[RMDB]
This 177-nucleotide RNA was probed chemically with 2A3 and DMS. The RNA was probed in 150 mM KOAc, 10 mM MgCl2 and 150 mM bicine (pH 8.5) at 24 C. Reactivities are rounded to 0.1 and cut off at 0 and 3. DMS adducts were read by reverse transcription with MarathonRT. 2A3 adducts were read by reverse transcription with SuperScript II with manganese. Source: RMDB library OK1LIB, as collected in RNAgym. For 2A3, 1,799 sequencing reads were counted.
RNA sequence: GGGAACGACUCGAGUAGAGUCGAAAACAGAGGACAGCCCAUGACAGGGAAAUAUAUGAAAUGGAAAUGGAAGGGAAAUUUGGGCUAUACUACAUAGAGCAGGUUUCUAAGCAGUCUUGCAGGAUGGGAUCCCCUGAGAAUUCGUUCUCAGGGGAUCAAAAGAAACAACAACAACAAC
Reactivity to 2A3 in 0.01 (KOAc 150mM, MgCl2 10mM, bicine 150mM(pH8.5), 24C), signal-to-noise 2, nucleotides 027 to 126: c010a000g040a060g030g110a070c030a050g030c040c030c000a030u050g090a050c060a060g010g050g100a030a110a010u210a010u080a050u080g160a120a090a070u220g010g050a040a100a030u100g070g040a060a060g120g000g010a000a100a090u080u050u060g070g050g000c020u010a010u040a030c070u070a030c030a060u210a040g050a020g040c060a030g010g010u000u000u090c010u010a030a040g030c000a010g040u040c010u030u060g040c050a030g120g000a120u080g030g000
Reactivity to DMS in 0.01 (KOAc 150mM, MgCl2 10mM, bicine 150mM(pH8.5), 24C), signal-to-noise 3, nucleotides 027 to 126: c110a090g000a060g010g000a110c060a070g000c030c000c020a020u000g000a220c080a080g000g000g000a070a070a110u050a110u020a050u010g010a080a100a090u000g000g010a020a080a070u010g000g020a110a070g000g010g000a010a030a050u000u010u000g000g000g000c040u010a020u020a120c220u010a080c140a070u010a050g000a060g010c020a020g000g000u000u000u010c010u010a090a110g010c030a040g000u000c020u020u000g020c050a050g000g010a040u020g030g000